[RMDB]
Overview
The data come from the RNA Mapping Database (RMDB), library OK3TST. The record gives the reactivity of an RNA of 207 nucleotides to 2A3 and DMS. For 2A3 the reverse transcriptase was SuperScript II with manganese.
RNA sequence: GGGAACGACUCGAGUAGAGUCGAAAAUGUUCACAUCCAAUCUAUCAGCACAGUCCAGUUUCAAAAUAGAUCUUGAAUCUGAUCACCCCCUCCUCCUGCACCACAAACAUCCUAGUCCCAGCCACGAUUAUCUCUGUUCUUGACAGAGACAUGCAUACAGCACCCAUUUAUUCGUAAAUGGGUGCUGAAAAGAAACAACAACAACAAC
Reactivity to 2A3 in 0.01 (KOAc 150mM, MgCl2 10mM, bicine 150mM(pH8.5), 24C), signal-to-noise 1, nucleotides 027 to 156: u090g020u010u040c060a010c060a170u160c070c020a060a050u050c020u050a120u030c040a010g020c050a050c010a100g030u020c010c040a010g000u130u050u080c070a060a050a070a070u110a090g000a040u030c020u040u120g100a140a090u070c060u030g050a090u090c000a130c020c000c030c030c010u000c000c000u000c010c010u000g060c030a050c020c000a020c030a000a150a000c010a020u070c020c000u000a020g000u030c010c000c010a010g020c030c000a000c010g030a030u100u110a080u120c000u000c000u000g050u140u020c080u100u240g020a010c010a000g000a000g000a000c020a050u120g020c000a000u000a110
Reactivity to DMS in 0.01 (KOAc 150mM, MgCl2 10mM, bicine 150mM(pH8.5), 24C), signal-to-noise 2, nucleotides 027 to 156: u010g010u000u010c050a060c090a090u020c070c030a070a100u000c030u000a050u010c030a190g050c090a110c050a130g030u000c070c040a080g020u010u000u010c070a020a090a090a090u000a080g000a040u000c060u000u000g000a030a050u010c040u000g010a080u000c030a160c040c000c020c010c010u000c040c010u000c010c010u000g030c010a070c050c030a060c050a100a030a050c030a050u000c020c040u000a060g010u000c030c020c000a140g000c040c030a030c030g020a100u000u020a020u010c000u000c000u010g030u000u000c170u000u020g000a060c000a040g000a050g010a010c010a020u000g000c060a090u000a100
For DMS the reverse transcriptase was MarathonRT. The 2A3 profile rests on 652 reads. DMS (dimethyl sulfate) methylates the pairing face of unpaired adenines and cytosines. The DMS profile rests on 2,799 reads.